RNA sequence: GGGAACGACUCGAGUAGAGUCGAAAACGGUUAGAGCUUGGAGUAGGAUGCGGUUCUCCCGUCCGUUGAAAUCUUGGAUGCUCAAGCGUAGCGAUUUCGGUCGUUAUCGUAUCCGGCAUGAUGGAAAAGUGAAAAAUUAGUCUCUUAUACAAAUGUGACCUACGUACAUCUUCGGAUGUACGUAGGUAAAAGAAACAACAACAACAAC
Reactivity to 2A3 in 0.01 (KOAc 150mM, MgCl2 10mM, bicine 150mM(pH8.5), 24C), signal-to-noise 2, nucleotides 027 to 156: c050g010g030u130u090a040g010a030g040c050u080u090g040g030a040g000u070a090g000g050a050u100g020c020g050g010u050u110c110u000c060c000c000g020u020c000c000g080u070u070g050a070a030a060u040c040u080u100g100g020a050u080g000c020u050c020a000a040g040c040g030u030a030g000c000g040a020u080u050u090c160g040g000u030c020g040u020u020a090u140c000g010u010a040u080c040c000g030g040c030a070u110g060a020u060g060g110a040a090a090a080g100u100g160a070a000a010a050a070u080u080a030g030u020c010u000c000u070u180a100u030a080c070a130a070a080u150g050u170g110
Reactivity to DMS in 0.01 (KOAc 150mM, MgCl2 10mM, bicine 150mM(pH8.5), 24C), signal-to-noise 1, nucleotides 027 to 156: c010g040g000u000u000a100g020a070g020c010u020u050g040g000a060g000u050a070g030g020a130u000g010c050g030g020u010u000c090u010c030c040c020g010u010c030c020g030u000u020g000a040a110a130u030c020u000u010g030g020a130u000g000c020u010c030a070a150g030c030g000u000a060g050c040g010a050u000u000u020c160g010g000u000c010g000u000u010a020u000c060g060u000a060u010c070c070g010g000c050a020u000g010a060u000g000g020a050a090a060a090g030u010g010a020a050a130a040a090u000u000a110g020u020c030u000c020u010u000a200u010a180c070a100a060a100u000g050u000g010